Description
This 177-nucleotide RNA was probed chemically with DMS and 2A3. For DMS the reverse transcriptase was MarathonRT. For 2A3 the reverse transcriptase was SuperScript II with manganese.

RNA sequence: GGGAACGACUCGAGUAGAGUCGAAAAGUCGCCGCUUCUACAUCAACGCCCAGCGCGGGCGAGGGAGGCGUCCUACGGGGGUGACCCAUUCGCCGGCAUGGUAGAGGACAGCAAGAUUGCCGCGACGGGCAUAUCCACGUUUCGACGUGGAUAUGCCAAAAGAAACAACAACAACAAC
Reactivity to DMS in 0.01 (KOAc 150mM, MgCl2 10mM, bicine 150mM(pH8.5), 24C), signal-to-noise 1, nucleotides 027 to 126: g000u000c040g000c050c100g020c010u020u000c000u000a070c020a290u000c070a060a250c130g000c020c010c000a090g010c130g000c130g000g000g000c000g020a050g000g000g020a100g030g000c030g000u000c010c040u010a080c250g020g000g020g010g040u000g000a160c010c010c000a280u020u000c030g040c010c000g000g150c000a070u010g010g030u010a070g010a050g000g020a140c090a120g010c090a070a040g000a140u000u000g000c000c190g010c040g020a020c160g030
Reactivity to 2A3 in 0.01 (KOAc 150mM, MgCl2 10mM, bicine 150mM(pH8.5), 24C), signal-to-noise 1, nucleotides 027 to 126: g030u040c010g060c010c020g000c020u040u030c020u050a050c010a070u080c070a150a050c000g000c000c000c000a010g070c280g000c080g070g020g000c010g010a010g010g040g030a230g010g070c020g030u000c000c020u090a050c090g220g040g000g000g000u060g100a180c050c010c000a050u030u040c000g030c000c000g060g000c000a010u020g060g000u070a060g030a060g100g020a090c070a010g040c000a010a000g030a150u120u150g040c000c010g010c020g000a040c000g000